[RMDB]
RNA sequence: GGGAACGACUCGAGUAGAGUCGAAAAGAGAGGGGAACCACCGGCGCGCGUCACUGAUAUAUCCACCGGGGGGUAAGGGGAGAAAAGGAUACAGCGCGACGAAGUUAGCACGCUGCCCCGUAAGGCUUGAAGAGUGUAGUGUUCGCACUACACUCAAUCUCAAAUAUGUGUUCGCACAUAUUUGAGAAAAAGAAACAACAACAACAAC
Reactivity to DMS in 0.01 (KOAc 150mM, MgCl2 10mM, bicine 150mM(pH8.5), 24C), signal-to-noise 1, nucleotides 027 to 156: g020a070g000a140g000g010g030g010a100a150c040c030a100c050c010g020g000c040g020c020g040c000g000u000c030a160c070u010g000a100u000a100u000a160u010c000c030a150c050c030g000g020g020g010g010g010u010a070a110g000g000g000g020a050g000a040a040a110a070g020g010a060u000a030c030a040g020c000g000c000g010a120c020g020a100a140g040u010u000a080g020c040a060c020g010c030u010g010c010c000c010c030g000u020a080a070g000g010c010u000u000g040a190a120g010a040g040u000g030u000a010g040u000g060u000u010c300g010c030a030c000u010a010c000a010c000u020c010a010a080
Reactivity to 2A3 in 0.01 (KOAc 150mM, MgCl2 10mM, bicine 150mM(pH8.5), 24C), signal-to-noise 1, nucleotides 027 to 156: g100a000g010a030g010g000g000g000a010a040c030c000a040c040c110g010g010c030g030c000g000c000g030u050c040a010c080u100g060a020u070a070u070a050u200c030c010a020c060c030g000g000g000g000g000g000u100a070a050g000g050g000g000a040g040a030a050a010a020g040g000a060u040a140c020a010g010c000g000c000g030a020c010g020a040a020g090u120u140a030g100c020a000c110g060c040u060g030c000c000c000c000g000u030a030a020g030g000c000u120u140g080a150a060g000a040g000u000g000u000a000g000u000g050u070u000c060g020c020a000c000u000a000c010a000c000u000c000a000a000